[RMDB]
RNA sequence: GGGAACGACUCGAGUAGAGUCGAAAAAGGGAUAUAUGUGUUACAAAGAUCGAUGGGUGACGCGUUGUGAAGAGAAUUGGUAUUUCUCCAAAACAGUGACAAAUCAUAUCGUUCAUGAACCUGUCAGACGUAGUUGCGGUUUCGACCGCAACUACGUAAAAGAAACAACAACAACAAC
Reactivity to DMS in 0.01 (KOAc 150mM, MgCl2 10mM, bicine 150mM(pH8.5), 24C), signal-to-noise 1, nucleotides 027 to 126: a060g000g010g000a160u030a090u000a010u000g060u010g010u000u000a110c090a020a080a140g000a010u020c060g080a040u020g000g000g010u040g000a210c250g010c100g000u040u000g020u000g000a300a080g000a010g040a020a030u000u010g010g120u010a220u000u000u020c010u000c000c010a040a070a110a010c100a010g000u000g000a080c050a060a100a060u010c030a040u000a040u000c010g000u000u010c060a120u000g010a120a120c090c010u000g000u000c050a100g020